Chemical mapping of a 177-nucleotide RNA with 2A3. The reactions ran in a buffer of 150 mM KOAc, 10 mM MgCl2 and 150 mM bicine (pH 8.5), at 24 C. 2A3 adducts were read by reverse transcription with SuperScript II with manganese. As a SHAPE reagent, 2A3 marks flexible, mostly unpaired nucleotides at the ribose 2'-OH.
RNA sequence: GGGAACGACUCGAGUAGAGUCGAAAAGGACCUUAAUGGCAAGUGGUAUGAUUUUGGUGACUUCGUAAUCACUCAACCUGGUUCAGGAGUAGCUAUAGUUGAUAGCUACUAUUCUUAUUUGAUGCCUCGAUGAAAUUAGCUUCGGCUAAUUUCAUCGAAAAGAAACAACAACAACAAC
Reactivity to 2A3 in 0.01 (KOAc 150mM, MgCl2 10mM, bicine 150mM(pH8.5), 24C), signal-to-noise 1, nucleotides 027 to 126: g000g030a010c010c020u060u130a090a090u200g040g000c000a010a050g100u010g050g000u030a050u060g030a030u070u000u050u030g080g020u060g010a040c030u040u000c040g000u010a030a130u050c010a000c010u130c040a020a030c020c000u100g000g090u070u010c030a030g000g040a010g000u010a010g000c000u000a000u000a070g190u100u210g120a010u020a010g030c000u020a000c010u010a020u030u000c010u030u120a160u080u050u160g070a030u090g010c010c060u030